An RNA of 207 nucleotides, treated with 2A3 and DMS and read out base by base. The DMS profile rests on 1,558 reads. DMS adducts were read by reverse transcription with MarathonRT. In probing experiments dimethyl sulfate is read out at A N1 and C N3, which are open when not base-paired.
RNA sequence: GGGAACGACUCGAGUAGAGUCGAAAAAAUGUAAUGCUGCCUUGAAAAACAAAGCAAGCAUUUUCUUCGUUAUAUCUAGAGUUUAUAACUAAAGAAGUAAUAUGUGCUAUAUUUUGCUCUAGUGCCAAGUACCAUAUUUUGGAAUGAAUAGAAUCAAUAGGUCCAUUUUAUUCGUAAAAUGGACCUAAAAAGAAACAACAACAACAAC
Reactivity to 2A3 in 0.01 (KOAc 150mM, MgCl2 10mM, bicine 150mM(pH8.5), 24C), signal-to-noise 1, nucleotides 027 to 156: a000a000u110g020u070a070a000u000g000c000u040g000c000c000u040u020g140a040a040a000a160a160c010a000a110a000g000c020a020a030g040c000a000u030u080u040u030c010u030u020c020g050u030u030a190u000a010u120c090u020a010g000a010g060u020u190u120a050u040a070a040c020u050a070a030a130g040a050a020g050u120a070a120u110a080u160g050u050g000c010u020a020u000a070u250u160u180u060g000c000u000c000u050a010g010u010g050c020c000a040a000g010u030a110c000c050a040u010a060u260u250u170u050g040g180a040a040u040g040a000a010u070a240g110a020a040u110c020a010a080
Reactivity to DMS in 0.01 (KOAc 150mM, MgCl2 10mM, bicine 150mM(pH8.5), 24C), signal-to-noise 1, nucleotides 027 to 156: a050a040u010g060u000a090a060u010g000c000u000g000c040c030u000u020g000a120a090a180a170a190c030a020a080a040g020c010a090a190g010c010a020u000u000u010u000c030u000u000c070g020u000u000a110u000a080u000c030u000a120g030a090g040u000u000u000a010u000a090a110c000u040a060a070a050g020a090a120g020u000a040a100u010a080u000g020u020g050c030u000a160u000a060u000u000u010u000g030c050u000c010u010a070g030u000g040c070c050a020a170g000u000a100c020c040a020u000a170u000u000u000u000g000g000a090a110u020g000a090a080u000a090g030a090a080u000c030a060a300